[RMDB]
This 207-nucleotide RNA was probed chemically with 2A3 and DMS.
RNA sequence: GGGAACGACUCGAGUAGAGUCGAAAAAAGGAUCCUAGAAUUCAAAAUGAUCCAUUUAGUCCGAUGCUAGAGGGGUGUAAACACCAUGGCAAGCCCCUUAAGCCUUUUAAUUGUGUUGAUUUAAAGGAAGCCAUGGAGGAUUAUGAGAAUCUCGUGAUAAUACUUUUACUUUCGAGUAAAAGUAUUAAAAAGAAACAACAACAACAAC
Reactivity to 2A3 in 0.01 (KOAc 150mM, MgCl2 10mM, bicine 150mM(pH8.5), 24C), signal-to-noise 1, nucleotides 027 to 156: a000a010g050g000a020u020c030c030u150a140g080a150a190u110u150c030a080a070a000a160u020g010a000u000c010c010a010u060u050u120a020g010u040c000c020g060a080u150g000c090u060a050g000a000g010g050g080g000u170g010u130a080a110a000c030a010c040c010a000u000g000g000c040a040a110g050c030c000c000c040u040u050a000a030g050c010c000u030u170u050u070a110a070u110u020g010u050g010u190u250g050a070u040u000u000a030a000a010g010g040a050a020g000c000c050a010u000g020g000a000g030g000a040u120u120a010u260g120a060g110a050a000u050c070u080c080g030u050g090a040
Reactivity to DMS in 0.01 (KOAc 150mM, MgCl2 10mM, bicine 150mM(pH8.5), 24C), signal-to-noise 1, nucleotides 027 to 156: a060a070g000g000a060u020c010c050u000a130g020a120a110u010u010c060a050a100a130a080u000g000a040u000c020c000a170u010u010u000a060g020u010c020c050g000a140u000g010c090u000a240g040a020g000g010g050g000u000g060u020a010a050a030c030a110c010c000a010u000g010g020c000a300a300g010c030c010c030c000u030u020a040a210g040c000c070u040u010u000u010a020a060u000u000g010u010g020u000u000g000a060u000u000u000a020a060a070g000g000a100a120g000c040c020a010u010g000g060a250g000g000a090u000u000a090u000g010a200g020a040a120u000c010u000c000g000u000g000a300

Conditions: 150 mM KOAc, 10 mM MgCl2 and 150 mM bicine (pH 8.5), 24 C. High 2A3 reactivity points to a flexible backbone, as in loops and unpaired stretches.